[RMDB]
RNA sequence: GGGAACGACUCGAGUAGAGUCGAAAACAUUGUUCUGAUCAUCUGAAGAUCAGCUAUUAGAAGAGAUAGAUCAGUUAAGUCCUUUGGACCUGAUCAGCUUGAUACAAGAACUACUGAUUUCAACUUCAAAACGGGUGCUACUUCGGUAGCACCCGAACAUCACCCUUUGGUUCGCCAAAGGGUGAUGAAAAGAAACAACAACAACAAC
Reactivity to 2A3 in 0.01 (KOAc 150mM, MgCl2 10mM, bicine 150mM(pH8.5), 24C), signal-to-noise 3, nucleotides 027 to 156: c060a060u100u180g000u170u050c030u010g000a000u040c000a040u000c070u160g100a100a030g010a040u030c000a010g010c040u130a140u270u130a120g100a110a020g030a000g010a030u050a080g000a000u010c000a000g020u100u180a180a000g010u010c010c000u070u140u300g020g010a030c010c010u030g010a050u010c020a010g030c010u040u140g010a030u060a130c050a100a000g030a180a030c030u060a030c040u050g080a110u060u080u110c110a200a160c070u100u140c060a040a040a040a020c010g000g000g000u010g020c000u000a000c000u030u090c200g070g000u000a000g000c000a010c000c000c000g010a020a000
Structure probing data (2A3) for a 207-nucleotide construct. 2A3 adducts were read by reverse transcription with SuperScript II with manganese.